[RMDB]
RNA sequence: GGGAACGACUCGAGUAGAGUCGAAAAAAAAAGAUAUGGAUCGAGCGAGCUGAUGACCUACAUCACAGUAUGGUCGGAAACGACCAUAUCACAGUGUAGCAAGGCUCACUCGAUCCUAAGUCAAAAACAAGAGAGAGGUGUUCGCACCUCUCUCUUGAAAAGAAACAACAACAACAAC
Reactivity to DMS in 0.01 (KOAc 150mM, MgCl2 10mM, bicine 150mM(pH8.5), 24C), signal-to-noise 1, nucleotides 027 to 126: a040a000a070a130a170g010a010u010a170u010g000g000a000u000c000g000a010g010c010g020a030g000c000u010g000a060u000g000a150c300c000u010a010c000a030u000c100a090c190a230g010u000a000u000g040g010u000c000g010g000a030a010a030c010g010a040c000c000a020u000a000u000c040a000c300a190g000u000g010u000a010g000c000a040a040g000g000c000u000c010a010c000u000c010g000a000u000c000c000u000a000a020g010u010c000a110a100a090a100a130
Source: RMDB library TTRDES, as collected in RNAgym.
Chemical mapping of a 177-nucleotide RNA with DMS.
The reactions ran in a buffer of 150 mM KOAc, 10 mM MgCl2 and 150 mM bicine (pH 8.5), at 24 C.
For DMS the reverse transcriptase was MarathonRT.
Reactivities are given for positions 27 through 126.